Chemical mapping of a 170-nucleotide RNA with 2A3 and DMS. For DMS the reverse transcriptase was MarathonRT. For 2A3 the reverse transcriptase was SuperScript II with manganese. Conditions: 150 mM KOAc, 10 mM MgCl2 and 150 mM bicine (pH 8.5), 24 C. It was measured as part of the RMDB library 15KLIB.
RNA sequence: GGGAACGACUCGAGUAGAGUCGAAAAUACGUCAAACCUGGAGGUACCAGUAGCGGAGAUGCCACCACUGCAUAUGCCAAUAGUGUCUUUAACAUUUUGCAGGCGACAACUGCUAAUGUCAGUGCACCAAUCCGUUCGUUCGCGAACGGAAAAAGAAACAACAACAACAAC
Reactivity to 2A3 in 0.01 (KOAc 150mM, MgCl2 10mM, bicine 150mM(pH8.5), 24C), signal-to-noise 5, nucleotides 027 to 129: u090a020c000g050u000c030a050a040a090c000c020u060g010g040a080g030g040u070a040c030c020a030g020u070a010g010c010g020g050a060g000a030u070g020c000c010a020c000c000a020c010u000g000c040a020u060a030u120g070c000c000a110a040u020a080g060u050g020u030c000u020u120u080a040a020c010a040u020u030u060u160g020c020a030g040g010c020g090a040c050a120a030c010u010g000c010u020a000a000u030g040u050c010a020g000u020g060c020a010c080c000a010a030
Reactivity to DMS in 0.01 (KOAc 150mM, MgCl2 10mM, bicine 150mM(pH8.5), 24C), signal-to-noise 5, nucleotides 027 to 129: u070a040c090g030u010c090a060a090a110c100c000u030g000g000a130g050g040u020a080c080c050a070g000u040a080g020c000g020g000a050g030a050u040g000c070c030a070c070c070a050c050u010g000c000a040u020a000u030g040c000c000a060a090u060a080g030u000g000u000c040u020u040u050a080a130c060a070u010u000u050u070g070c000a030g080g020c150g030a070c170a060a080c040u020g030c000u060a020a050u020g020u010c030a050g030u000g010c070a090c050c070a000a000